[RMDB]
This 177-nucleotide RNA was probed chemically with DMS and 2A3.
RNA sequence: GGGAACGACUCGAGUAGAGUCGAAAAGUAUUCUAGUUUCAUCUUGUAAAGACAAUGAUUAGCAGUUUCGGGGGCGUAAUGCCCUCAGCUGAUUCUCAAACUCUGAACAGGUGAGUCAUAUUAAUUCCGUGUCUACAUCAUUCGUGAUGUAGACACGAAAAGAAACAACAACAACAAC
Reactivity to DMS in 0.01 (KOAc 150mM, MgCl2 10mM, bicine 150mM(pH8.5), 24C), signal-to-noise 5, nucleotides 027 to 126: g010u010a070u000u010c070u000a090g010u010u020u000c010a010u010c000u010u030g000u000a010a190a020g000a000c040a030a300u000g010a020u000u000a020g010c010a010g000u000u020u020c210g050g000g000g000g040c000g020u050a070a090u050g020c010c000c000u000c010a010g000c000u010g000a010u010u010c000u000c010a020a070a300c300u000c000u000g010a290a030c000a010g000g010u000g000a020g020u000c090a100u040a040u020u020a060a120u020u000c040
Reactivity to 2A3 in 0.01 (KOAc 150mM, MgCl2 10mM, bicine 150mM(pH8.5), 24C), signal-to-noise 6, nucleotides 027 to 126: g080u060a140u120u070c060u110a040g040u080u050u020c000a030u010c010u150u190g000u010a010a030a000g010a010c040a020a070u020g000a000u010u010a000g000c010a000g010u020u110u210c130g010g000g020g010g000c020g050u150a090a090u300g000c000c000c000u000c000a000g000c000u000g000a000u020u000c000u000c000a020a040a030c020u000c000u010g020a030a020c000a010g000g010u000g000a010g030u020c030a030u090a080u200u220a080a140u160u030c030

Source: RMDB libraries RFM100 and RFMREP, as collected in RNAgym. Conditions: 150 mM KOAc, 10 mM MgCl2 and 150 mM bicine (pH 8.5), 24 C. For 2A3 the reverse transcriptase was SuperScript II with manganese.